The record gives the reactivity of an RNA of 177 nucleotides to 2A3 and DMS. For DMS the reverse transcriptase was MarathonRT. The reactions ran in a buffer of 150 mM KOAc, 10 mM MgCl2 and 150 mM bicine (pH 8.5), at 24 C.
RNA sequence: GGGAACGACUCGAGUAGAGUCGAAAAAUAGGCCACAGCUCCGAACGAAGGGAACGACGGGGAGGAGGCCUUCCCGAGAGGGGUCACCUGGUAAAGAGGCGUGGGAAAGUCGAGGGAAAUUGUCCUACCACUAGUAAAUGUUCGCAUUUACUAGUGGAAAAGAAACAACAACAACAAC
Reactivity to 2A3 in 0.01 (KOAc 150mM, MgCl2 10mM, bicine 150mM(pH8.5), 24C), signal-to-noise 4, nucleotides 027 to 126: a010u080a010g000g000c020c000a050c020a060g030c010u000c000c030g140a300a170c040g050a170a090g160g050g040a100a060c020g040a010c010g020g020g000g000a040g020g030a060g030g000c000c000u010u000c000c010c010g010a030g010a010g030g050g000g010u040c020a030c060c020u080g030g080u140a080a110a050g030a060g050g010c100g040u110g000g000g020a050a120a060g060u060c040g020a070g020g030g020a020a060a080u130u100g060u020c000c000u020a090
Reactivity to DMS in 0.01 (KOAc 150mM, MgCl2 10mM, bicine 150mM(pH8.5), 24C), signal-to-noise 5, nucleotides 027 to 126: a070u020a040g030g030c020c010a180c080a120g000c000u000c010c010g000a100a130c060g030a110a140g010g020g020a100a110c060g010a240c030g000g000g000g000a050g010g000a100g000g000c010c010u000u000c010c000c000g010a110g010a100g000g000g000g020u010c090a070c060c030u000g000g010u010a030a080a080g010a070g010g010c070g020u010g020g000g010a060a080a110g010u000c060g000a100g000g000g010a090a070a090u010u000g010u000c020c010u000a210
The 2A3 profile rests on 5,439 reads.